RNA sequence: GGGAACGACUCGAGUAGAGUCGAAAACUCUACAACAUACGAGUGUUCUUGUAGAUCUUUGUGGGAACGUCGUAAAAGUUCGGCAUUGGUGGCAUCUGUGACCGCAUCCGCGCUUCUGGGUGCGGAACCGGCGAGGGGAUACGCCGUCACGGUUGAAGCCAUGGCGUGGAUUCGUCCACGCCAUGGCAAAAGAAACAACAACAACAAC
Reactivity to 2A3 in 0.01 (KOAc 150mM, MgCl2 10mM, bicine 150mM(pH8.5), 24C), signal-to-noise 1, nucleotides 027 to 156: c000u000c000u000a000c020a260a010c020a070u240a090c010g020a000g000u020g030u040u020c000u000u010g060u020a060g010a110u020c080u060u100u160g040u010g000g070g010a000a060c080g030u020c020g050u110a000a020a030a200g040u050u070c000g020g000c070a050u080u000g050g000u060g030g000c080a080u070c140u040g080u070g070a110c000c000g000c010a000u020c000c000g040c020g080c150u180u110c130u160g000g010g000u040g000c020g000g000a000a020c000c010g000g000c030g000a040g040g060g000g030a030u030a100c000g010c070c000g060u070c040a030c030g020g070u020u020g060a130a010

Overview: The data come from the RNA Mapping Database (RMDB), library OK3TST. Chemical mapping of a 207-nucleotide RNA with 2A3. 2A3 adducts were read by reverse transcription with SuperScript II with manganese. For 2A3, 582 sequencing reads were counted.